[RMDB]
RNA sequence: GGGAACGACUCGAGUAGAGUCGAAAAGUCCGGUGAUACGUCACCGGACAAGGGUUCUCCCGCCCGCCGUGAACCCAGGCUAAAAGUUAAGGUAGGUGGGCAAGCAUCGCAUUACGAUGCGAUGCAACGAAAAUGGCUCAUUCGUGAGCCAUUUUCGAAAAGAAACAACAACAACAAC
Reactivity to DMS in 0.01 (KOAc 150mM, MgCl2 10mM, bicine 150mM(pH8.5), 24C), signal-to-noise 1, nucleotides 027 to 126: g000u000c000c000g000g030u000g000a040u000a220c280g020u000c070a040c000c000g000g000a000c030a030a070g010g000g000u000u000c050u000c030c070c000g000c000c000c000g060c000c000g000u000g040a020a050c100c090c040a300g000g000c070u020a180a140a200a110g000u000u000a000a080g000g000u030a190g000g000u000g000g000g060c010a060a110g040c000a000u000c000g000c030a000u030u000a160c280g000a080u000g000c000g000a030u000g020c020a000a080
Reactivity to 2A3 in 0.01 (KOAc 150mM, MgCl2 10mM, bicine 150mM(pH8.5), 24C), signal-to-noise 3, nucleotides 027 to 126: g010u000c020c000g000g010u010g000a010u020a080c300g110u010c000a000c000c000g030g000a000c000a000a000g000g000g000u000u000c020u020c030c000c020g010c000c000c000g000c000c000g040u030g040a020a020c010c010c020a020g090g000c050u080a130a120a040a090g080u170u140a120a040g080g080u060a040g000g000u000g010g000g000c030a000a010g000c000a000u000c000g000c010a000u010u070a050c270g110a010u010g000c000g010a000u000g000c000a010a020
Background:
This 177-nucleotide RNA was probed chemically with DMS and 2A3. DMS adducts were read by reverse transcription with MarathonRT. The RNA was probed in 150 mM KOAc, 10 mM MgCl2 and 150 mM bicine (pH 8.5) at 24 C.